[RMDB]
RNA sequence: GGGAACGACUCGAGUAGAGUCGAAAAGAUAUGGAUCCGACGAUAAGCCUAUAUCGGAAACGAUAUGAGGCUUUUGACGUCGCAUCCUAAGUCAAAACACAACGGAUCCUUCGGGAUCCGUUGUGAACGUACCAGCUUAGUUCGCUAAGCUGGUACGAAAAGAAACAACAACAACAAC
Reactivity to 2A3 in 0.01 (KOAc 150mM, MgCl2 10mM, bicine 150mM(pH8.5), 24C), signal-to-noise 1, nucleotides 027 to 126: g020a000u030a000u070g000g010a000u000c060c010g000a000c010g020a060u040a300a000g020c000c020u000a020u020a010u000c000g000g000a010a030a010c010g010a000u020a020u100g300a110g010g000c000u000u000u000u010g020a000c010g010u020c000g000c010a020u070c010c000u000a020a000g040u030c000a000a020a180a170c020a000c000a010a010c010g020g020a000u000c020c070u150u170c300g010g010g030a000u000c000c000g000u000u010g000u000g000a000a000
Reactivity to DMS in 0.01 (KOAc 150mM, MgCl2 10mM, bicine 150mM(pH8.5), 24C), signal-to-noise 2, nucleotides 027 to 126: g000a000u000a160u010g000g000a010u010c300c000g000a010c000g020a080u010a020a010g010c000c000u010a030u000a010u000c000g000g010a080a020a060c000g010a000u000a000u000g000a010g030g020c010u000u010u000u000g000a200c010g000u000c030g020c170a000u000c000c000u000a020a070g030u000c020a100a060a110a220c010a000c000a000a000c000g010g000a010u000c000c010u000u010c230g010g030g000a000u000c000c010g000u010u000g000u000g000a020a100
Structure probing data (2A3 and DMS) for a 177-nucleotide construct. The 2A3 profile rests on 2,237 reads. For DMS, 2,747 sequencing reads were counted. The data come from the RNA Mapping Database (RMDB), library TTRDEL. Conditions: 150 mM KOAc, 10 mM MgCl2 and 150 mM bicine (pH 8.5), 24 C. 2A3 adducts were read by reverse transcription with SuperScript II with manganese. DMS adducts were read by reverse transcription with MarathonRT. Values cover nucleotides 27 to 126. DMS (dimethyl sulfate) methylates the pairing face of unpaired adenines and cytosines.